[RMDB]
RNA sequence: GGGAACGACUCGAGUAGAGUCGAAAACCCGUGAUAGCUGGUUCUCUUCGAAAUGCAUUUAGGUGCAGCGUCACGUGCUGAUGCGCGGGGGUAGAGCACUGACAAGGCUAGGGGGCACACCCGCUUAGACACCUCUCUUGUUCGCAAGAGAGGUGUCAAAAGAAACAACAACAACAAC
Reactivity to DMS in 0.01 (KOAc 150mM, MgCl2 10mM, bicine 150mM(pH8.5), 24C), signal-to-noise 1, nucleotides 027 to 126: c000c000c010g020u050g010a080u000a100g060c060u010g000g000u010u000c050u000c000u000u020c020g060a030a130a180u020g000c010a040u030u000u080a090g000g000u000g020c020a000g000c060g040u010c080a020c060g000u020g010c000u010g000a220u020g020c060g000c000g060g000g030g030g000u010a050g030a040g000c030a020c020u020g030a030c080a080a140g000g010c030u000a090g000g020g000g030g000c100a060c060a060c020c000c000g000c060u040u030a230
Reactivity to 2A3 in 0.01 (KOAc 150mM, MgCl2 10mM, bicine 150mM(pH8.5), 24C), signal-to-noise 3, nucleotides 027 to 126: c000c000c000g010u040g050a110u130a050g000c010u030g000g030u090u030c040u000c010u050u050c040g100a050a190a120u160g040c020a040u070u090u200a070g000g060u010g000c010a010g000c040g150u020c030a050c090g010u010g000c010u100g020a150u140g000c020g010c000g020g020g000g000g000u060a070g040a020g080c000a000c030u010g060a030c030a080a000g040g010c000u060a030g000g020g000g000g000c010a000c000a020c010c000c000g010c030u020u040a020
Structure probing data (DMS and 2A3) for a 177-nucleotide construct.
2A3 adducts were read by reverse transcription with SuperScript II with manganese.
As a SHAPE reagent, 2A3 marks flexible, mostly unpaired nucleotides at the ribose 2'-OH.
For DMS, 2,365 sequencing reads were counted.
The RNA was probed in 150 mM KOAc, 10 mM MgCl2 and 150 mM bicine (pH 8.5) at 24 C.
For 2A3, 2,328 sequencing reads were counted.